[RMDB]
RNA sequence: GGGAACGACUCGAGUAGAGUCGAAAACGGUGAUGCGCGACAUGGGCGAGCGCAUCACCAUCGACCCGGACCAGCGUGCGUGGUACGUGGCCACCAAGCGCGCGGACUUCUCCGGCGCCGAGGAGAAGUCCUACACGAGCUUCGGCUCGUGUAGGACAAAAGAAACAACAACAACAAC
Reactivity to DMS in 0.01 (KOAc 150mM, MgCl2 10mM, bicine 150mM(pH8.5), 24C), signal-to-noise 2, nucleotides 027 to 126: c160g010g000u000g030a010u010g010c000g030c010g010a140c120a220u010g010g000g010c070g020a260g040c010g000c000a010u010c010a000c010c000a010u000c060g000a140c010c000c000g000g000a140c110c080a100g010c010g020u000g010c020g000u010g000g010u000a080c060g010u000g010g010c060c050a090c020c010a030a070g000c000g010c000g010c010g020g010a120c020u000u000c050u000c000c000g020g020c040g000c040c000g020a040g000g000a010g030a050a070
Reactivity to 2A3 in 0.01 (KOAc 150mM, MgCl2 10mM, bicine 150mM(pH8.5), 24C), signal-to-noise 2, nucleotides 027 to 126: c080g030g010u010g000a000u010g010c000g010c040g050a120c050a270u270g090g080g100c050g060a040g000c000g010c000a000u010c000a000c000c000a000u030c030g050a040c000c000c000g000g040a070c040c020a010g000c000g000u020g040c020g020u020g000g010u040a120c130g060u120g130g030c020c000a010c010c020a080a010g000c000g000c000g000c040g050g010a050c030u050u060c010u000c000c010g080g030c100g010c020c020g050a030g020g030a040g020a040a030
Record summary
Source: RMDB library OK2TRN, as collected in RNAgym. Structure probing data (DMS and 2A3) for a 177-nucleotide construct. For 2A3, 2,554 sequencing reads were counted. Reactivities are given for positions 27 through 126.